Structure probing data (2A3 and DMS) for a 177-nucleotide construct. For DMS, 10,816 sequencing reads were counted. For 2A3 the reverse transcriptase was SuperScript II with manganese.
[RMDB]
RNA sequence: GGGAACGACUCGAGUAGAGUCGAAAAGGCCUGGCGGGCCGUUUCUACCCCGGCGGUGGGAGCAUAUGUUACCGCUUCUACCGCAGAAAGGGUCGGCAUACCCUCCGCAAUGGUAGAAAGAAUGAGACCACUAUAACUCUUUCGAGAGUUAUAGUGGAAAAGAAACAACAACAACAAC
Reactivity to 2A3 in 0.01 (KOAc 150mM, MgCl2 10mM, bicine 150mM(pH8.5), 24C), signal-to-noise 8, nucleotides 027 to 126: g010g010c000c010u030g040g050c100g040g000g000c000c010g010u000u020u000c010u010a040c000c000c000c030g070g000c000g000g000u010g000g000g000a020g030c020a070u100a090u300g200u230u190a130c050c070g010c000u000u000c000u000a010c000c000g000c010a000g040a030a060a000g020g010g000u020c020g040g000c000a030u070a140c000c000c000u050c020c010g050c080a110a120u190g030g020u040a030g030a020a070a020g080a020a060u170g040a050g050a050
Reactivity to DMS in 0.01 (KOAc 150mM, MgCl2 10mM, bicine 150mM(pH8.5), 24C), signal-to-noise 5, nucleotides 027 to 126: g010g020c000c010u000g030g020c120g010g000g020c030c050g010u000u000u000c030u000a060c010c000c130c070g000g020c010g000g020u010g000g000g010a030g000c020a110u030a070u010g020u020u030a100c200c140g000c020u000u000c000u000a000c020c030g020c030a010g000a070a150a070g000g020g000u010c040g010g010c110a090u020a110c000c000c010u010c030c030g000c140a120a070u020g000g000u000a020g010a050a030a040g020a070a070u040g000a120g000a240

It was measured as part of the RMDB library OK1LIB. DMS adducts were read by reverse transcription with MarathonRT.